[RMDB]
RNA sequence: GGGAACGACUCGAGUAGAGUCGAAAAUGGACUUUUUACAGUUCCUACUUAUCCGGUUUUAACGCUGUUUUAUUGGCGCAAAGGUUUACGGAUAAACAACUAAUAAUUAAACCUUCUGUGUGCGAAAAUUGGACGUUUAGGUUCGCCUAAACGUCAAUACUGCCACUUAGUUCGCUAAGUGGCAGUAAAAAGAAACAACAACAACAAC
Reactivity to 2A3 in 0.01 (KOAc 150mM, MgCl2 10mM, bicine 150mM(pH8.5), 24C), signal-to-noise 1, nucleotides 027 to 156: u100g040g000a040c020u180u140u100u140u130a110c200a060g030u040u080c020c020u000a090c020u070u040a000u000c010c010g010g020u000u010u010u010a060a000c010g000c030u000g140u090u220u020u240a140u070u220g020g020c000g000c000a010a000a000g000g000u000u000u000a000c000g000g000a020u030a030a090a130c010a050a000c080u130a030a090u090a090a020u160u070a020a010a000c010c000u060u110c090u120g080u000g010u000g050c100g050a030a020a120a130u090u160g090g030a000c000g010u000u010u000a000g040g000u020u010c090g090c000c000u000a000a000a000c000g000u000c000a000a000
Chemical mapping of a 207-nucleotide RNA with 2A3. The 2A3 profile rests on 437 reads. It was measured as part of the RMDB library M2RFPK.